[RMDB]
RNA sequence: GGGAACGACUCGAGUAGAGUCGAAAAGAAAAGGGAGGGAGCACACAGGGAUCCAUGGGUGUGUGUGGGAGGCAUGGAUGAGGGAGGGACCUAUUAAGCGGUAUAGGGACGCGGGAGGGAAAAGAAACCCAUUUGUAAACUUCGGUUUACAAAUGGGAAAAGAAACAACAACAACAAC
Reactivity to 2A3 in 0.01 (KOAc 150mM, MgCl2 10mM, bicine 150mM(pH8.5), 24C), signal-to-noise 1, nucleotides 027 to 126: g140a020a130a000a000g040g140g080a280g100g060g000a120g100c060a000c000a000c060a100g200g000g000a160u070c240c070a050u130g030g100g090u010g000u000g020u000g000u000g060g000g010a200g050g000c040a000u000g050g000a000u080g000a090g000g040g030a140g030g070g010a000c000c000u050a080u300u240a080a000g000c030g050g030u060a010u060a140g120g030g000a070c150g020c050g070g000g000a120g000g000g040a000a000a000a100g030a000a010a000